Notes: This 177-nucleotide RNA was probed chemically with 2A3 and DMS. Reactivities are given for positions 27 through 126. It was measured as part of the RMDB library TTRDES. Conditions: 150 mM KOAc, 10 mM MgCl2 and 150 mM bicine (pH 8.5), 24 C. For DMS the reverse transcriptase was MarathonRT. The DMS profile rests on 2,620 reads. 2A3 adducts were read by reverse transcription with SuperScript II with manganese. The 2A3 profile rests on 4,488 reads.
[RMDB]
RNA sequence: GGGAACGACUCGAGUAGAGUCGAAAAGAUAUGGACUUACUGGAGCCGAUAAGCUAGGGAUCGGAAACGAUCCUAGCUUUUGACGGCUCGUAAGUCCUAAGUCAAAAGGAUCGGUUCGCCGAUCCAACCUUGUUAGGCAGUUCGCUGCCUAACAAGGAAAAGAAACAACAACAACAAC
Reactivity to 2A3 in 0.01 (KOAc 150mM, MgCl2 10mM, bicine 150mM(pH8.5), 24C), signal-to-noise 3, nucleotides 027 to 126: g000a000u040a020u080g000g000a010c020u010u000a010c130u300g300g020a020g020c020c070g220a300u150a250a000g000c000u020a040g100g150g210a140u010c010g010g000a030a000a000c000g000a000u010c020c000u000a000g010c010u000u020u000u090g090a030c050g000g030c010u020c000g010u000a000a000g000u000c000c000u000a000a000g020u000c020a030a000a060a190g000g000a010u010c000g020g060u090u140c300g000c080c000g000a000u030c000c010a000a000
Reactivity to DMS in 0.01 (KOAc 150mM, MgCl2 10mM, bicine 150mM(pH8.5), 24C), signal-to-noise 2, nucleotides 027 to 126: g010a010u000a060u000g000g000a020c000u000u020a020c000u020g070g030a020g070c000c000g010a080u000a010a000g000c010u000a010g010g020g020a010u000c000g020g020a020a030a020c010g010a000u000c000c000u000a010g000c000u000u000u010u000g010a210c100g020g000c000u000c000g000u000a000a000g000u000c000c000u000a000a030g000u000c000a090a060a110a150g020g010a000u010c000g020g000u010u010c270g010c000c000g000a000u000c000c000a060a030